[RMDB]
RNA sequence: GGGAACGACUCGAGUAGAGUCGAAAACGGUUACGCCUUCUUUACCGUUAUUAAGGAAGGUACUCGGCCAUGCUAAGGGAAGCAUUAUUCCUUAGGCGCAUGUCGCCGCCAGCAUGGUGUGAGGGGAAAAAGUAUGCUGGGUUCGCCCAGCAUACAAGGCAAUAAACUAGUUCGCUAGUUUAUUGCCAAAAGAAACAACAACAACAAC
Reactivity to 2A3 in 0.01 (KOAc 150mM, MgCl2 10mM, bicine 150mM(pH8.5), 24C), signal-to-noise 9, nucleotides 027 to 156: c010g000g020u020u020a030c070g000c000c000u000u000c000u000u020u010a010c010c010g180u120u110a060u070u050a020a000g010g000a010a000g010g000u030a030c010u010c000g020g000c000c000a000u010g000c000u050a070a070g030g000g000a020a010g010c080a220u110u140a150u170u120c010c010u050u070a070g010g000c000g000c030a130u230g120u300c020g000c030c010g010c020c020a010g000c000a000u010g010g010u060g140u150g040a030g030g040g020g060a020a070a030a050a030g000u000a000u000g000c000u000g010g010g030u030u040c100g100c020c000c000a000g000c000a000u000a000c000a000a010
Reactivity to DMS in 0.01 (KOAc 150mM, MgCl2 10mM, bicine 150mM(pH8.5), 24C), signal-to-noise 2, nucleotides 027 to 156: c010g010g000u000u000a010c020g000c010c000u000u000c000u010u000u000a010c010c000g020u010u010a030u000u010a010a030g010g040a020a010g000g010u000a020c010u010c020g010g020c000c010a020u000g010c010u020a170a120g010g000g030a030a050g020c210a170u000u010a130u000u000c010c010u000u000a110g010g020c010g040c030a120u020g030u000c020g010c000c000g010c150c120a050g010c000a020u000g020g000u010g010u000g020a030g000g010g020g010a060a020a060a120a140g010u000a000u000g020c000u000g020g010g020u000u010c300g020c010c010c000a020g020c000a000u000a000c010a040a090
Chemical mapping of a 207-nucleotide RNA with 2A3 and DMS. Reactivities are rounded to 0.1 and cut off at 0 and 3. For DMS, 7,643 sequencing reads were counted. It was measured as part of the RMDB library M2RFPK.